Structure probing data (DMS and 2A3) for a 177-nucleotide construct. The DMS profile rests on 2,196 reads. For 2A3 the reverse transcriptase was SuperScript II with manganese.
RNA sequence: GGGAACGACUCGAGUAGAGUCGAAAACUAUUUAUAGACAGAACAGUGGAAAACGUAUAUCGCUAUAAACCUUAGACCCCGAAUCUUCCAGUCGUACUAUUCCACAUAGGCGAGGCAUAAGCGAAAGCCUACUGACGAGGUUCGCCUCGUCAGUAGGAAAAGAAACAACAACAACAAC
Reactivity to DMS in 0.01 (KOAc 150mM, MgCl2 10mM, bicine 150mM(pH8.5), 24C), signal-to-noise 2, nucleotides 027 to 126: c010u020a100u020u010u010a060u030a050g010a110c080a250g000a120a070c080a130g000u000g000g000a040a030a060a060c060g000u010a050u010a020u000c040g000c010u000a080u010a000a010a020c230c070u030u010a060g020a230c080c040c020c020g000a070a080u000c050u000u010c000c000a140g010u000c040g000u010a020c070u040a070u000u000c000c030a050c100a050u000a020g000g000c050g000a050g000g000c040a070u040a160a050g020c090g020a050a030a110g000
Reactivity to 2A3 in 0.01 (KOAc 150mM, MgCl2 10mM, bicine 150mM(pH8.5), 24C), signal-to-noise 3, nucleotides 027 to 126: c010u020a040u050u090u040a150u050a040g060a090c110a040g060a140a020c030a030g070u060g040g040a110a060a030a000c010g040u070a090u020a010u140c010g000c020u000a020u040a070a140a050c010c000u030u030a050g150a140c000c010c000c020g010a070a040u010c040u020u000c010c030a100g050u040c010g010u040a120c010u030a100u070u080c040c020a040c020a070u070a030g000g030c050g010a000g030g000c080a070u090a190a000g000c050g090a070a000a000g050